Source: RMDB library M2RFPK, as collected in RNAgym. Structure probing data (DMS and 2A3) for a 207-nucleotide construct. For 2A3, 4,243 sequencing reads were counted.
[RMDB]
RNA sequence: GGGAACGACUCGAGUAGAGUCGAAAAACAUAGGCCAUGCUUACGAGCAUGACCUAUGACGAAUCUCAAGCAAUCAAGCAUUCUACUUCUAUUGCAACACUGAGGAGCUUACGAGCUCCUCAGUGAAAAAAGAGAGUAAUGUUCGCAUUACUCUCAACAUGAUUAUCAUGUUCGCAUGAUAAUCAUGAAAAGAAACAACAACAACAAC
Reactivity to DMS in 0.01 (KOAc 150mM, MgCl2 10mM, bicine 150mM(pH8.5), 24C), signal-to-noise 2, nucleotides 027 to 156: a150c000a000u010a000g010g020c000c010a010u000g000c000u000u000a170c240g030a060g050c000a010u000g010a000c000c000u000a000u000g020a110c080g030a080a120u000c030u000c020a080a140g000c050a070a110u000c120a050a100g000c070a110u010u000c090u000a040c020u000u000c090u000a100u000u000g020c010a120a170c000a030c000u000g010a030g000g000a030g040c000u000u000a120c220g010a050g060c000u000c000c010u010c000a010g020u000g000a000a020a060a160a040a060g010a020g000a030g050u000a010a020u000g030u000u010c260g000c020a040u020u000a000c000u000c010u000c000a010a060
Reactivity to 2A3 in 0.01 (KOAc 150mM, MgCl2 10mM, bicine 150mM(pH8.5), 24C), signal-to-noise 4, nucleotides 027 to 156: a000c010a010u000a000g000g000c010c000a010u000g000c010u100u060a090c250g070a010g010c000a000u000g000a010c000c000u000a000u000g000a000c030g090a110a140u000c010u010c060a070a030g010c010a000a060u080c020a050a020g040c030a140u210u060c040u120a080c020u050u080c030u110a050u010u060g020c020a080a040c000a040c010u000g000a000g010g000a000g000c000u050u060a070c210g020a010g000c000u000c000c000u000c000a000g000u000g000a000a000a000a000a000a000g000a000g000a000g000u010a000a000u000g030u030u110c160g000c080a000u000u000a000c000u000c000u000c000a000a010